Chemical mapping of a 207-nucleotide RNA with 2A3 and DMS. The 2A3 profile rests on 2,367 reads. It was measured as part of the RMDB library OK3TST. DMS adducts were read by reverse transcription with MarathonRT. Reactivities are given for positions 27 through 156.
RNA sequence: GGGAACGACUCGAGUAGAGUCGAAAAACAGAAGAAAAAUGUCCUAAUCCCAACAUCUAAACAUAAGCAUUUUGCUAUGUUUGGGAAGAACUUUCUAGUAUUAGUAGUACUCUCUGCAAUUAAAAUGGACUGCCCCUAAAAGUAGGCAGUUCUCCAAUCCCUAUUUAGGAUUCGUCCUAAAUAGGGAAAAAGAAACAACAACAACAAC
Reactivity to 2A3 in 0.01 (KOAc 150mM, MgCl2 10mM, bicine 150mM(pH8.5), 24C), signal-to-noise 4, nucleotides 027 to 156: a000c050a050g070a120a020g120a020a170a010a030a020u070g010u030c010c000u030a080a080u020c020c000c010a020a000c010a110u060c030u090a050a040a000c020a020u060a120a100g030c010a050u090u130u260u300g000c000u010a000u010g000u010u010u020g010g000g000a010a050g050a000a060c020u120u130u050c030u070a020g030u020a080u200u030a070g060u010a000g010u030a060c020u020c010u030c050u140g020c020a060a030u270u040a170a150a090a140u150g010g000a000c000u020g000c000c000c000c030u080a170a120a060a040g100u070a050g010g000c000a000g000u020u000c000u000c010c000a020a070
Reactivity to DMS in 0.01 (KOAc 150mM, MgCl2 10mM, bicine 150mM(pH8.5), 24C), signal-to-noise 2, nucleotides 027 to 156: a040c030a070g000a100a100g000a020a050a100a100a040u020g020u000c020c020u010a060a150u000c020c010c000a050a100c050a110u020c070u010a100a040a080c040a090u000a070a160g040c010a300u020u020u000u000g010c010u020a050u000g000u000u010u000g010g050g010a060a080g000a060a020c010u000u000u010c030u020a130g010u000a040u000u000a160g000u010a130g000u000a040c000u000c050u000c030u020g010c020a090a070u000u000a050a050a110a090u000g010g010a000c000u000g010c000c000c020c050u000a100a070a070a250g010u010a020g030g020c010a020g010u000u000c000u000c050c000a080a300